[RMDB]
RNA sequence: GGGAACGACUCGAGUAGAGUCGAAAAGAUAUGGAAACAAGAGAAGCUAUUGCUAUCUGGCUUCCCUGUUUCGGAAACGAAACAGCAGCCAGAUAGCAAUAGAACUACUUCUCUGGUUUCCUAAGUCCUAUACUUAUAGGUUCGCCUAUAAGUAUAGAAAAGAAACAACAACAACAAC
Reactivity to DMS in 0.01 (KOAc 150mM, MgCl2 10mM, bicine 150mM(pH8.5), 24C), signal-to-noise 7, nucleotides 027 to 126: g010a130u000a300u010g010g000a010a010a010c000a040a010g000a020g000a010a010g000c000u000a010u000u000g010c000u000a000u000c000u000g000g000c000u000u000c190c210c010u000g010u000u000u000c000g010g000a130a120a220c000g010a000a010a010c000a010g100c180a010g010c000c000a010g000a000u000a000g010c000a000a000u000a000g000a030a020c090u010a300c000u000u000c000u000c000u000g000g020u000u000u000c000c000u000a030a110g000u000c030